Structure probing data (DMS) for a 177-nucleotide construct.
For DMS the reverse transcriptase was MarathonRT.
The RNA was probed in 150 mM KOAc, 10 mM MgCl2 and 150 mM bicine (pH 8.5) at 24 C.
The DMS profile rests on 1,371 reads.
Reactivities are given for positions 27 through 126.
High DMS reactivity at an A or C suggests that its Watson-Crick edge is free.
RNA sequence: GGGAACGACUCGAGUAGAGUCGAAAACUGGAGCCAAGGAGCCCCCCUGGGUGGGGGCAUCAGGAGCAGGGGCAGGGCCUGAGGACUGCUCCCCCUGCAUGGAGGGCAGGCCAGGAUGGAGCCCAGGCGAAUAGAACCUCUUCGGAGGUUCUAUUCGAAAAGAAACAACAACAACAAC
Reactivity to DMS in 0.01 (KOAc 150mM, MgCl2 10mM, bicine 150mM(pH8.5), 24C), signal-to-noise 1, nucleotides 027 to 126: c030u000g010g000a080g020c040c040a090a160g010g000a170g010c000c000c000c000c000c010u040g030g000g000u020g050g000g010g010g040c000a000u000c010a060g020g010a100g010c050a050g000g000g000g000c070a050g000g000g010c000c020u040g000a120g010g010a070c010u000g010c000u020c020c010c020c020c050u000g000c090a080u000g010g000a050g010g000g000c020a030g020g000c010c000a040g000g010a070u010g020g000a210g020c010c010c000a070g010g010